[RMDB]
RNA sequence: GGGAACGACUCGAGUAGAGUCGAAAAGAUAUGGACCCAUUGGGCUUGGACCUUACUGUCUCGGAAACGAGAUUAAGCUAGCCUGAUGGGUCCUAAGUCAAAAGCACCUUACUUCGGUAAGGUGCAAUCAACUCAAUCGGUUCGCCGAUUGAGUUGAAAAAGAAACAACAACAACAAC
Reactivity to DMS in 0.01 (KOAc 150mM, MgCl2 10mM, bicine 150mM(pH8.5), 24C), signal-to-noise 2, nucleotides 027 to 126: g000a040u000a060u000g000g000a040c000c000c000a010u000u000g000g000g010c020u000u000g020g000a020c300c010u020u000a030c300u030g000u020c000u000c000g020g030a020a020a020c010g000a010g000a020u000u000a030a010g010c000u000a010g020c020c010u000g010a010u000g030g010g000u000c000c010u000a000a060g000u010c000a100a080a140a280g000c000a020c000c000u000u000a000c000u000u040c200g070g010u000a000a020g000g020u000g010c000a000a020
Source: RMDB library TTRDES, as collected in RNAgym. Structure probing data (DMS) for a 177-nucleotide construct. Reactivities are given for positions 27 through 126. Reactivities are rounded to 0.1 and cut off at 0 and 3.